[RMDB]
RNA sequence: GGGAACGACUCGAGUAGAGUCGAAAAGAAGUUCUCUGAAUGUGUAGAGCACUGAAACCACGAGGAGGAGGUGUGGUGUCUGUCUGAGCAUGAAGCUGGUUAUUGGUGUUGCUUCUGCAGCUGCCAUCUGUGUGUGUCUAUUCGUAGACACACACAGAAAAGAAACAACAACAACAAC
Reactivity to DMS in 0.01 (KOAc 150mM, MgCl2 10mM, bicine 150mM(pH8.5), 24C), signal-to-noise 2, nucleotides 027 to 126: g010a170a130g000u000u040c010u020c010u010g010a090a080u000g040u000g000u000a050g020a090g000c090a050c110u000g020a100a120a070c070c040a100c080g000a070g000g010a070g000g000a040g010g000u020g010u040g000g000u000g000u000c020u010g020u020c040u000g010a080g020c070a050u020g020a080a080g000c020u000g020g000u010u000a120u000u000g000g020u000g020u010u000g010c020u000u000c010u000g000c080a020g010c020u000g000c040c060a120u030
Reactivity to 2A3 in 0.01 (KOAc 150mM, MgCl2 10mM, bicine 150mM(pH8.5), 24C), signal-to-noise 2, nucleotides 027 to 126: g100a080a010g020u040u000c020u000c000u000g220a280a120u120g050u070g070u180a000g010a000g080c070a030c090u090g050a060a020a010c000c010a050c040g020a030g070g000a010g040g010a050g000g000u060g000u030g060g030u020g030u040c020u010g010u020c050u040g050a040g010c020a050u070g070a010a000g020c030u040g040g150u230u070a170u130u100g080g010u050g000u070u080g020c000u070u000c050u070g000c010a000g020c000u070g030c000c010a000u020